RNA sequence: GGGAACGACUCGAGUAGAGUCGAAAAAUCAUCGUAGUAAUCGCGCGAAAAUCACGUGAAAUAAUCAGAGGAAUCGUUUGAAAUCAUCGUAGUAAUCGCGCGAAAAUCACGUGAAAUAAUCAGAGGAUAGGACGAUAGGAUUCGUCCUAUCGUCCUAAAAAGAAACAACAACAACAAC
Reactivity to DMS in 0.01 (KOAc 150mM, MgCl2 10mM, bicine 150mM(pH8.5), 24C), signal-to-noise 4, nucleotides 027 to 126: a090u000c020a030u020c020g000u010a050g030u000a050a200u000c010g010c000g020c010g000a000a050a150a100u010c090a030c000g000u000g000a040a120a090u010a050a120u010c010a070g000a020g020g070a190a120u000c020g010u000u000u000g010a050a100a120u000c020a050u050c050g010u020a040g010u000a060a190u010c000g020c010g000c000g010a000a030a110a070u010c060a010c000g000u010g000a050a060a060u000a070a100u010c100a050g010a110g010g020a230
Reactivity to 2A3 in 0.01 (KOAc 150mM, MgCl2 10mM, bicine 150mM(pH8.5), 24C), signal-to-noise 3, nucleotides 027 to 126: a010u010c030a030u140c030g000u000a150g000u020a090a030u000c040g000c000g000c010g020a010a000a050a100u030c000a000c000g010u000g030a000a000a120u130a000a030u100c080a050g050a060g150g160a140a200u180c140g130u030u030u050g040a030a050a020u040c060a010u160c050g020u010a100g010u020a090a110u000c030g000c010g020c020g000a010a000a010a000u100c000a000c010g020u000g030a060a000a030u230a000a010u170c040a020g060a100g200g070a060